[RMDB]
Record summary: This 207-nucleotide RNA was probed chemically with 2A3 and DMS. The reactions ran in a buffer of 150 mM KOAc, 10 mM MgCl2 and 150 mM bicine (pH 8.5), at 24 C.

RNA sequence: GGGAACGACUCGAGUAGAGUCGAAAAACUAGUUGAGUGGCCUUAAGGGGGAAGGGGUGUAAUGAAAGCACUGGAGUCUUUGACAGUGCCUUGCAAAGCUUAAGCACUCAAAUAUUUCCUGUGUUCUUUCCAGUAUUUCAGUAUUUGCUGUCCUGUAUAAAGAGGUGAAAUUCGUUUCACCUCUUUAAAAAGAAACAACAACAACAAC
Reactivity to 2A3 in 0.01 (KOAc 150mM, MgCl2 10mM, bicine 150mM(pH8.5), 24C), signal-to-noise 2, nucleotides 027 to 156: a000c090u060a010g040u030u010g020a000g000u020g010g070c010c000u070u040a040a090g000g020g000g000g020a020a020g000g000g000g010u000g030u030a070a100u080g050a060a000a000g020c000a010c010u000g030g020a020g050u050c080u110u050u140g060a020c040a020g020u000g000c030c000u000u040g000c040a110a090a010g010c000u060u030a020a000g030c010a000c010u010c010a000a010a010u070a040u070u060u010c020c010u030g010u000g060u080u010c010u040u060u040c040c020a030g000u030a070u060u070u070c020a010g030u080a090u080u170u120g050c010u030g040u060c050c030u070g200u190a020
Reactivity to DMS in 0.01 (KOAc 150mM, MgCl2 10mM, bicine 150mM(pH8.5), 24C), signal-to-noise 2, nucleotides 027 to 156: a070c090u000a070g010u010u000g000a080g040u010g020g020c060c000u000u010a080a080g000g020g030g020g010a100a080g000g020g010g010u000g010u000a100a140u000g010a040a050a060g020c020a020c000u010g020g010a130g020u010c150u020u010u000g010a150c050a050g020u010g010c010c010u000u010g030c070a110a070a190g030c060u010u000a050a100g010c010a020c030u010c030a020a030a110u000a060u010u000u000c010c020u000g000u000g020u000u000c060u000u000u000c030c030a130g020u000a070u000u000u010c060a090g000u000a080u000u000u010g030c020u000g040u000c030c030u000g000u010a210
Reactivities are given for positions 27 through 156. The DMS profile rests on 5,504 reads.